Record summary:
This 207-nucleotide RNA was probed chemically with 2A3 and DMS. The RNA was probed in 150 mM KOAc, 10 mM MgCl2 and 150 mM bicine (pH 8.5) at 24 C. High DMS reactivity at an A or C suggests that its Watson-Crick edge is free.
RNA sequence: GGGAACGACUCGAGUAGAGUCGAAAAAAGAGGUUUGGAAAGACCCACCACAGAAGGUAAUAGUCCUGUAUGUUAAACGAGAAGACUUUAGAUAUGAUCCAGAGUACCACGGGACACGUGAAACCCUGUGGGAAGCAGGAGGGACCACCCUCCAAGAAUUAGCUAGUGAGUUCGCUCACUAGCUAAUAAAAGAAACAACAACAACAAC
Reactivity to 2A3 in 0.01 (KOAc 150mM, MgCl2 10mM, bicine 150mM(pH8.5), 24C), signal-to-noise 1, nucleotides 027 to 156: a030a030g220a140g030g030u120u190u140g070g010a060a060a030g000a020c000c020c000a000c000c000a000c010a020g140a120a010g010g000u020a030a000u050a100g020u000c010c000u050g050u050a030u180g030u050u070a140a050a000c000g020a020g000a130a030g060a090c110u090u060u110a080g020a110u110a060u220g150a080u090c030c080a050g020a030g100u020a010c000c040a000c000g010g000g010a010c010a000c100g080u110g090a070a000a070c000c000c000u040g000u000g000g000g020a000a020g010c070a000g000g000a000g000g000g020a040c070c000a050c040c030c010u000c010c000a000a000g000a000
Reactivity to DMS in 0.01 (KOAc 150mM, MgCl2 10mM, bicine 150mM(pH8.5), 24C), signal-to-noise 1, nucleotides 027 to 156: a030a030g030a230g000g050u000u000u000g040g000a240a160a070g000a050c010c010c010a070c010c010a160c010a110g000a030a050g000g010u010a090a140u020a160g010u010c000c000u030g010u000a040u010g000u030u000a070a160a110c070g000a210g000a150a080g030a080c010u000u000u040a000g010a080u000a050u000g040a220u020c010c000a050g040a070g010u000a130c000c000a030c080g020g000g010a050c050a030c170g010u000g050a060a070a080c050c000c000u050g010u000g000g000g000a070a150g040c060a140g020g000a080g070g000g020a160c130c100a050c020c000c010u000c000c000a000a100g000a130